The record gives the reactivity of an RNA of 177 nucleotides to DMS. The RNA was probed in 150 mM KOAc, 10 mM MgCl2 and 150 mM bicine (pH 8.5) at 24 C. Reactivities are given for positions 27 through 126. It was measured as part of the RMDB library OK2TRN.
RNA sequence: GGGAACGACUCGAGUAGAGUCGAAAAGCCGGCGAGGCCUACGCGGCGGCCGCCGUCACCGUGCUGGAGCCGCCGGCCUCCGACCCCGAGCUGCAGCCCGCCGAGCGCCCGCUGCCAUCGCCGGGGUACAAUGUCACUACUUCGGUAGUGACAUUGUAAAAGAAACAACAACAACAAC
Reactivity to DMS in 0.01 (KOAc 150mM, MgCl2 10mM, bicine 150mM(pH8.5), 24C), signal-to-noise 2, nucleotides 027 to 126: g030c020c020g030g030c080g000a100g020g000c010c030u000a100c170g030c010g010g030c010g000g000c050c100g040c080c050g000u000c110a070c230c030g000u000g000c040u010g010g000a270g020c000c000g050c040c150g030g020c010c020u000c020c060g010a140c030c010c020c020g000a190g010c050u000g000c010a050g010c000c020c130g000c030c000g000a140g000c070g000c080c020c120g020c010u000g000c020c200a010u010c060g000c010c010g000g010g000g030u010